This 207-nucleotide RNA was probed chemically with DMS and 2A3. For 2A3 the reverse transcriptase was SuperScript II with manganese. Values are in units of 0.01, from 0 to 300, in steps of 10. Conditions: 150 mM KOAc, 10 mM MgCl2 and 150 mM bicine (pH 8.5), 24 C. Reactivities are given for positions 27 through 156.
[RMDB]
RNA sequence: GGGAACGACUCGAGUAGAGUCGAAAAGCGUACUACCGAGCUCGGGUGUGUUGUCAGCUCUUGGAGGCAGCUUCCCAAAUAGGAAGCUGUGAAGAGAGCUUGGAUUUACACAUCUCUAGCGUGGCUCGGUAUCGCAAAAUCCUAGUUCGCUAGGAAAGUAUACUAUACCCUUCGGGGUAUAGUAUACAAAAGAAACAACAACAACAAC
Reactivity to DMS in 0.01 (KOAc 150mM, MgCl2 10mM, bicine 150mM(pH8.5), 24C), signal-to-noise 2, nucleotides 027 to 156: g040c030g040u000a020c060u000a000c000c000g030a050g000c000u010c030g000g010g010u000g010u050g010u000u000g030u000c000a080g020c020u000c010u000u000g010g020a300g000g000c010a010g000c000u000u000c000c000c010a060a130a250u010a060g000g010a050a010g030c000u000g000u000g010a300a300g010a010g000a010g010c000u010u000g000g020a100u010u010u000a030c010a010c040a050u000c000u000c040u000a100g000c100g020u000g010g060c010u000c000g020g000u000a000u000c020g000c030a080a070a080a120u020c000c010u000a070g010u000u000c250g000c010u000a030g000g000a020a050a150
Reactivity to 2A3 in 0.01 (KOAc 150mM, MgCl2 10mM, bicine 150mM(pH8.5), 24C), signal-to-noise 4, nucleotides 027 to 156: g000c010g020u060a070c040u020a000c010c000g000a000g000c030u040c060g030g030g020u000g000u000g010u040u000g010u020c000a000g000c000u000c000u020u010g040g000a110g300g000c000a000g000c010u010u020c010c020c000a270a300a050u200a050g010g000a000a000g000c010u050g080u170g100a020a010g000a010g000a000g010c000u000u080g030g000a000u060u120u300a000c010a000c000a010u010c070u000c050u120a060g120c040g100u090g020g000c000u000c000g010g000u000a000u000c000g000c000a010a060a000a110u020c010c000u000a000g010u040u090c200g030c110u020a000g000g010a030a020a040